[RMDB]
RNA sequence: GGGAACGACUCGAGUAGAGUCGAAAACUUACCCGGUUUUAACGCUGUUUUAUUGGCGCAAAGGUUUACGGAUAAACAACUAAUAAUUAAACCUUUUGUGUGCGAAACGUGGUUGUUUAACGUACUCACUGCCCCCAGGGAUUCGUCCCUGGGGGAACAAUUCAGAUAACUUCGGUUAUCUGAAUUGAAAAGAAACAACAACAACAAC
Reactivity to DMS in 0.01 (KOAc 150mM, MgCl2 10mM, bicine 150mM(pH8.5), 24C), signal-to-noise 1, nucleotides 027 to 156: c080u010u030a130c000c000c010g020g000u000u020u010u000a080a100c060g040c010u010g040u000u010u010u000a110u030u000g000g010c010g050c070a080a120a040g040g040u000u000u000a060c020g020g030a200u000a020a010a070c030a010a130c040u000a090a130u000a140a140u020u010a080a100a070c010c000u000u000u000u000g030u020g050u000g050c110g000a120a120a090c110g010u000g000g000u000u000g020u000u000u000a030a140c030g010u010a050c040u000c050a140c060u000g010c000c000c010c000c000a030g000g030g000a060u000u010c300g010u020c000c040c000u000g010g010g000g000g000a000a010
Reactivity to 2A3 in 0.01 (KOAc 150mM, MgCl2 10mM, bicine 150mM(pH8.5), 24C), signal-to-noise 3, nucleotides 027 to 156: c080u130u200a150c000c000c050g060g020u080u100u020u210a070a010c030g010c030u040g100u170u150u090u100a130u160u200g080g000c030g010c020a070a060a030g000g000u000u000u000a010c010g040g050a160u140a140a140a040c030a040a030c060u120a070a150u050a110a030u190u090a020a020a010c010c000u020u190u180u110g090u050g000u030g030c090g030a080a060a000c050g010u060g020g000u040u020g010u010u040u030a070a040c010g010u010a030c030u040c050a070c030u060g010c000c000c030c000c000a000g020g000g000a010u030u040c090g030u010c030c000c000u010g000g010g000g000g000a000a000